[RMDB]
RNA sequence: GGGAACGACUCGAGUAGAGUCGAAAAAAUGAUUACAUGAUGGUCGGUGCAGAGGGUCGAUUAUAUAACAUUGAGAACAACAUAUUUUAUUAUCAGAGAGGAUCCAGCUGGUGGCCUUAUCCGAGCCCUUGAAUGAAAUAUUCGUAUUUCAUUCAAGAAAAGAAACAACAACAACAAC
Reactivity to DMS in 0.01 (KOAc 150mM, MgCl2 10mM, bicine 150mM(pH8.5), 24C), signal-to-noise 4, nucleotides 027 to 126: a060a050u010g010a140u000u010a110c110a040u000g010a060u000g010g010u000c060g010g020u000g000c070a050g000a140g000g000g010u000c040g010a060u000u000a060u010a050u000a040a070c080a070u000u030g010a110g010a090a060c110a070a120c050a040u010a050u010u020u000u000a060u010u000a060u020c030a120g010a110g010a130g010g000a030u000c030c050a110g010c070u010g010g010u010g010g010c030c020u000u000a030u020c030c070g010a140g000c110c080
Reactivity to 2A3 in 0.01 (KOAc 150mM, MgCl2 10mM, bicine 150mM(pH8.5), 24C), signal-to-noise 3, nucleotides 027 to 126: a000a000u130g040a040u130u160a080c050a050u100g020a030u060g070g020u020c010g000g060u060g070c040a020g010a040g090g020g000u020c020g000a020u080u050a070u040a010u040a120a020c010a030u100u160g060a050g040a130a010c020a050a000c010a040u160a120u070u090u070u060a140u140u030a050u090c020a010g080a010g020a040g150g000a020u000c020c000a020g020c010u070g020g080u040g050g000c010c010u020u020a040u000c040c040g020a060g100c000c030